[RMDB]
RNA sequence: GGGAACGACUCGAGUAGAGUCGAAAAAUCUAGCGCAACGCCAGCGGCCGAUUUUAGCACUUCGCGAGCCAUAUCUGGAGUUACAUCGCACUCAAAUUCGGCAUUAAUGCUCAUUCCGUGACCAGUAAAUCCAUUAGGCGUUCGCGCCUAAUGGAUUAAAAGAAACAACAACAACAAC
Reactivity to DMS in 0.01 (KOAc 150mM, MgCl2 10mM, bicine 150mM(pH8.5), 24C), signal-to-noise 1, nucleotides 027 to 126: a120u000c050u000a140g030c110g020c110a150a060c030g020c000c030a110g000c110g010g000c040c040g020a060u010u000u000u000a030g030c080a090c160u000u000c110g030c050g000a050g000c000c040a060u000a050u010c040u020g030g000a110g000u000u000a050c140a080u000c140g060c020a110c110u020c080a030a040a090u000u000c050g000g010c000a110u000u010a180a060u010g000c020u000c010a060u000u010c000c010g060u000g000a180c030c010a230g000u020a060
Reactivity to 2A3 in 0.01 (KOAc 150mM, MgCl2 10mM, bicine 150mM(pH8.5), 24C), signal-to-noise 1, nucleotides 027 to 126: a020u080c020u040a010g060c020g040c020a000a050c020g000c020c000a010g040c060g030g020c010c040g060a040u000u110u020u140a030g040c020a050c160u110u100c150g000c020g050a000g020c030c000a060u080a040u030c070u020g040g000a000g040u030u030a040c030a140u080c010g000c060a070c010u100c030a100a130a140u050u000c000g000g000c020a000u060u110a090a050u090g010c000u020c060a040u060u100c110c030g000u000g020a050c000c060a000g020u140a040